[RMDB]
RNA sequence: GGGAACGACUCGAGUAGAGUCGAAAAGCACCAGCGCAAUGGCAGUAACUAUUGACUAUCGUCAUGAAACACAAGACCAAAGUGGUAAUAAUCACAAAGACCGAUUAUUAAUGUCUCACCGCUUUGCUCAGCCGUAUAGGUUCGCCUAUACGGCUGAAAAAGAAACAACAACAACAAC
Reactivity to 2A3 in 0.01 (KOAc 150mM, MgCl2 10mM, bicine 150mM(pH8.5), 24C), signal-to-noise 2, nucleotides 027 to 126: g000c010a040c020c030a010g030c040g000c090a050a120u050g040g000c010a030g030u030a100a040c070u060a090u150u080g030a040c030u070a080u290c040g040u020c020a030u070g090a020a070a010c100a000c010a090a000g020a060c010c040a070a030a030g000u000g070g000u020a020a020u030a070a010u080c000a020c060a130a260a040g110a080c040c060g020a020u000u030a000u040u030a110a090u120g050u040c010u030c060a010c000c030g020c070u070u010u030g010c020
Reactivity to DMS in 0.01 (KOAc 150mM, MgCl2 10mM, bicine 150mM(pH8.5), 24C), signal-to-noise 2, nucleotides 027 to 126: g000c080a130c040c010a120g010c050g030c050a130a050u010g000g020c080a070g040u020a030a160c170u010a050u020u010g040a040c050u000a060u000c140g000u000c050a040u010g010a070a070a090c090a050c060a070a070g000a090c160c000a040a010a000g020u000g000g000u010a010a020u000a010a000u010c020a100c140a100a090a100g000a120c250c110g020a040u000u000a040u010u000a080a080u000g010u000c090u000c030a130c090c020g010c000u000u000u010g000c140